[RMDB]
RNA sequence: GGGAACGACUCGAGUAGAGUCGAAAACUUUGAUGUACCUACAUUCUGCGCAAACCGUUCUGCAAUGUGUAAUUGGUGCUUGAUUAGCCAAGAUUCCAUAACUCACUACCCAGCUCUUAAGAUGGUUCCACUACAUCGUUCGCGAUGUAGAAAAGAAACAACAACAACAAC
Reactivity to 2A3 in 0.01 (KOAc 150mM, MgCl2 10mM, bicine 150mM(pH8.5), 24C), signal-to-noise 9, nucleotides 027 to 129: c040u090u050u210g080a070u080g030u080a070c010c010u020a030c010a100u080u060c030u090g030c040g010c060a040a080a130c040c020g050u080u050c030u040g020c020a040a070u090g040u020g020u120a090a110u060u050g030g010u040g020c000u040u050g070a120u110u120a030g050c030c010a040a020g050a140u090u010c020c010a020u040a060a050c020u020c070a030c020u050a060c020c000c000a020g020c020u020c010u090u080a050a030g040a060u080g040g000u030u010c000c000a020
Reactivity to DMS in 0.01 (KOAc 150mM, MgCl2 10mM, bicine 150mM(pH8.5), 24C), signal-to-noise 9, nucleotides 027 to 129: c080u030u020u050g030a100u000g020u000a060c060c030u000a060c070a110u050u010c060u000g040c110g010c090a060a070a070c070c040g000u000u000c000u000g020c000a040a060u060g020u030g020u020a050a080u000u000g040g040u000g010c030u000u000g030a120u060u030a100g030c080c050a010a080g000a140u000u040c000c000a020u020a070a090c090u000c010a000c070u030a070c020c010c010a000g000c000u000c010u000u000a020a090g020a050u030g020g040u000u000c010c000a150
Conditions: 150 mM KOAc, 10 mM MgCl2 and 150 mM bicine (pH 8.5), 24 C. The record gives the reactivity of an RNA of 170 nucleotides to 2A3 and DMS. Values are in units of 0.01, from 0 to 300, in steps of 10. DMS adducts were read by reverse transcription with MarathonRT. The data come from the RNA Mapping Database (RMDB), library 15KLIB.